[RMDB]
Description: An RNA of 177 nucleotides, treated with 2A3 and DMS and read out base by base. For DMS, 13,878 sequencing reads were counted. DMS adducts were read by reverse transcription with MarathonRT. 2A3 adducts were read by reverse transcription with SuperScript II with manganese. Conditions: 150 mM KOAc, 10 mM MgCl2 and 150 mM bicine (pH 8.5), 24 C. The 2A3 profile rests on 12,132 reads.
RNA sequence: GGGAACGACUCGAGUAGAGUCGAAAAAGCAAGGGGGAUUGGGGUGGUCAAGCAAACACACAACCAAUAUUUUCAAUGAUCUUCAGAUAGACGACUGCGCUCCGGGGACAAAGGUCAGUGUUCCGCACUGACAUUACCCAUUCGUGGGUAAUGUCAGAAAAGAAACAACAACAACAAC
Reactivity to 2A3 in 0.01 (KOAc 150mM, MgCl2 10mM, bicine 150mM(pH8.5), 24C), signal-to-noise 9, nucleotides 027 to 126: a010g080c070a050a040g040g000g010g010g030a040u040u090g020g010g010g020u050g000g030u060c040a040a030g060c040a030a120a020c060a010c000a010c010a100a090c040c030a060a030u110a140u110u120u070u100c120a120a110u120g070a080u040c030u070u060c050a040g010a130u110a040g030a050c030g020a030c030u050g010c030g000c050u030c020c020g000g000g010g010a020c060a070a100a010g030g010u030c020a040g010u020g030u090u030c010c020g000c020a020
Reactivity to DMS in 0.01 (KOAc 150mM, MgCl2 10mM, bicine 150mM(pH8.5), 24C), signal-to-noise 6, nucleotides 027 to 126: a060g010c050a050a050g000g000g000g000g010a090u010u020g010g000g000g010u010g000g010u010c080a080a070g020c140a050a060a060c100a070c100a090c100a070a100c070c050a040a060u030a070u030u010u020u020c070a060a070u020g000a060u010c020u000u000c070a080g000a080u020a070g010a110c050g000a070c050u010g010c070g010c020u010c050c050g030g000g000g010a070c110a040a080a040g010g010u000c030a060g010u010g020u000u000c020c030g030c120a200